[RMDB]
RNA sequence: GGGAACGACUCGAGUAGAGUCGAAAAGAUAUGGAUCCCACGUAACUUCAACAGCUCAUAAUGGUGGGCUCGGAAACGAGCCGUAACAUCCAUUAUGAGACAUGAAGGAUAAGUGGGAUCCUAAGUCCUCAACAUAAGGGUUCGCCCUUAUGUUGAGAAAAGAAACAACAACAACAAC
Reactivity to DMS in 0.01 (KOAc 150mM, MgCl2 10mM, bicine 150mM(pH8.5), 24C), signal-to-noise 3, nucleotides 027 to 126: g020a110u000a300u000g000g000a000u010c000c000c000a010c000g000u000a140a280c000u000u000c000a010a140c300a230g010c000u000c010a000u000a000a000u010g020g000u000g010g000g020c010u010c000g020g000a090a110a250c000g000a000g000c010c000g010u020a020a050c180a030u010c010c010a010u010u000a000u000g020a000g000a010c070a130u010g000a040a020g000g010a090u020a090a190g010u000g010g000g000a000u000c000c000u000a010a090g040u000c030
Reactivity to 2A3 in 0.01 (KOAc 150mM, MgCl2 10mM, bicine 150mM(pH8.5), 24C), signal-to-noise 2, nucleotides 027 to 126: g090a030u150a090u160g020g010a010u000c000c010c000a030c010g000u010a080a040c000u010u020c020a150a180c080a300g050c000u010c010a000u000a000a010u010g000g030u010g000g030g000c030u010c000g060g000a060a090a010c010g000a010g000c000c000g000u030a020a000c030a100u100c020c000a000u000u010a010u010g010a000g020a000c000a060u090g000a010a000g010g010a020u010a040a000g010u000g000g140g000a000u010c000c000u010a020a000g000u000c000